[RMDB]
RNA sequence: GGGAACGACUCGAGUAGAGUCGAAAAAUUGACGAAGAAGGCAAGAAACCCUGUGUUUAUGAGGAAUCUAAGGUCGCUUACCACCACAGCGCCUUACAAUACGGCAUAGCUAACGAGAUCUAUGACUAUGUAGUAUCAUCUAAAAGAUCAAGAGUUAGUAUACUAGGAGUUUCGACUCCUAGUAUACAAAAGAAACAACAACAACAAC
Reactivity to DMS in 0.01 (KOAc 150mM, MgCl2 10mM, bicine 150mM(pH8.5), 24C), signal-to-noise 3, nucleotides 027 to 156: a120u000u000g010a120c050g010a100a080g000a100a060g000g000c040a080a090g010a060a080a120c030c020c040u000g010u000g020u000u000u020a120u020g020a110g030g020a050a090u000c060u010a050a050g030g020u000c060g070c030u000u010a170c050c010a140c080c030a100c210a080g020c020g030c010c010u020u010a030c130a060a050u000a050c020g030g000c010a040u000a020g030c010u000a070a140c110g020a130g010a090u000c050u010a170u020g010a020c020u010a020u000g000u000a090g010u000a020u000c060a110u000c070u020a060a050a060a050g010a060u000c020a040a070g020a120g010u000u000a120
Reactivity to 2A3 in 0.01 (KOAc 150mM, MgCl2 10mM, bicine 150mM(pH8.5), 24C), signal-to-noise 6, nucleotides 027 to 156: a000u060u080g010a010c040g000a000a020g050a010a010g040g020c040a030a040g050a080a110a050c020c020c030u040g020u010g040u080u120u060a150u110g030a030g040g040a060a050u050c050u070a040a030g010g030u210c030g000c010u010u080a080c020c080a050c030c020a060c070a030g010c010g000c000c000u010u010a050c070a020a070u040a070c040g030g000c030a020u020a030g040c020u020a060a020c050g050a030g010a180u020c020u070a050u090g070a160c020u040a050u080g030u020a040g030u020a030u080c040a010u020c040u140a060a100a070a050g060a040u080c060a060a030g060a010g070u110u170a010